Overview: This 177-nucleotide RNA was probed chemically with DMS and 2A3. 2A3 is a SHAPE reagent: it acylates the 2'-hydroxyl of flexible nucleotides of all four kinds. DMS adducts were read by reverse transcription with MarathonRT. Source: RMDB libraries RFM100 and RFMREP, as collected in RNAgym. Conditions: 150 mM KOAc, 10 mM MgCl2 and 150 mM bicine (pH 8.5), 24 C.
[RMDB]
RNA sequence: GGGAACGACUCGAGUAGAGUCGAAAAGUUGCUCUGCUGUGCCUGUGGCCUCGGGGCAAAGAGAAAGUGGCGAUUUCUACACUCAGUGCUCGGGAACCAGUGGGCACUGAGAAUGGUUUAUGGCCUGGUAGAUGCAUGAGUUCGCUCAUGCAUCUACAAAAGAAACAACAACAACAAC
Reactivity to DMS in 0.01 (KOAc 150mM, MgCl2 10mM, bicine 150mM(pH8.5), 24C), signal-to-noise 4, nucleotides 027 to 126: g000u000u000g000c000u000c000u000g000c260u010g020u060g020c010c000u040g000u020g030g020c010c000u010c010g030g000g010g020c050a000a020a080g000a090g000a030a030a040g010u020g000g010c000g000a260u010u010u000c010u000a190c170a120c010u010c000a010g020u000g000c000u000c000g000g000g000a140a170c170c220a130g010u020g010g000g000c020a010c000u000g000a000g010a020a080u010g010g030u020u010u010a060u030g030g000c000c010u000g010
Reactivity to 2A3 in 0.01 (KOAc 150mM, MgCl2 10mM, bicine 150mM(pH8.5), 24C), signal-to-noise 5, nucleotides 027 to 126: g080u020u020g000c000u000c010u000g090c080u060g110u200g070c010c050u300g100u210g070g000c000c000u010c000g000g020g000g010c030a000a040a000g050a010g000a000a020a000g020u010g010g020c010g030a020u010u020u020c010u030a040c040a010c050u000c010a000g000u010g000c000u000c030g080g040g130a120a120c040c000a070g070u230g060g000g000c000a000c000u000g000a000g000a020a050u040g000g040u040u080u090a090u110g080g020c000c000u010g070